[RMDB]
RNA sequence: GGGAACGACUCGAGUAGAGUCGAAAAGCUUCAUUGUAGGAAAAACUGCUUGGCACAGGCAGGUGGGAAGCACUGCUGGGACUGAGAAUAGUCUGUGCUUGGACUGGUGAUAAAGUGAGUGCUCAGGAUGUAGGAAAGCUUUCGAGCUUUCCUACAUAAAAGAAACAACAACAACAAC
Reactivity to 2A3 in 0.01 (KOAc 150mM, MgCl2 10mM, bicine 150mM(pH8.5), 24C), signal-to-noise 1, nucleotides 027 to 126: g010c020u050u070c070a020u040u090g100u210a090g060g000a090a100a010a000a010c010u030g000c010u030u060g050g060c020a030c000a080g000g040c000a010g000g030u030g030g040g010a070a030g060c010a010c050u060g040c030u050g040g090g040a020c030u070g020a020g040a150a080u060a090g020u060c010u030g010u060g010c020u020u000g000g020a010c000u020g040g000u030g060a090u040a070a140a010g050u030g080a050g060u020g020c040u040c030a030g080g000
Reactivity to DMS in 0.01 (KOAc 150mM, MgCl2 10mM, bicine 150mM(pH8.5), 24C), signal-to-noise 2, nucleotides 027 to 126: g010c030u000u010c030a100u000u000g010u000a080g020g010a060a030a070a130a120c020u000g010c000u010u000g020g020c080a080c060a070g010g010c020a040g000g020u010g000g010g000a060a050g020c030a080c040u000g020c040u010g010g000g000a110c040u000g010a100g010a100a100u010a080g010u000c040u000g000u010g010c030u000u010g020g000a070c060u000g000g010u010g010a090u000a030a060a090g010u000g000a080g010u000g000c020u000c050a070g010g000
This 177-nucleotide RNA was probed chemically with 2A3 and DMS. The reactions ran in a buffer of 150 mM KOAc, 10 mM MgCl2 and 150 mM bicine (pH 8.5), at 24 C. DMS adducts were read by reverse transcription with MarathonRT. For DMS, 2,920 sequencing reads were counted. 2A3 is a SHAPE reagent: it acylates the 2'-hydroxyl of flexible nucleotides of all four kinds. For 2A3 the reverse transcriptase was SuperScript II with manganese.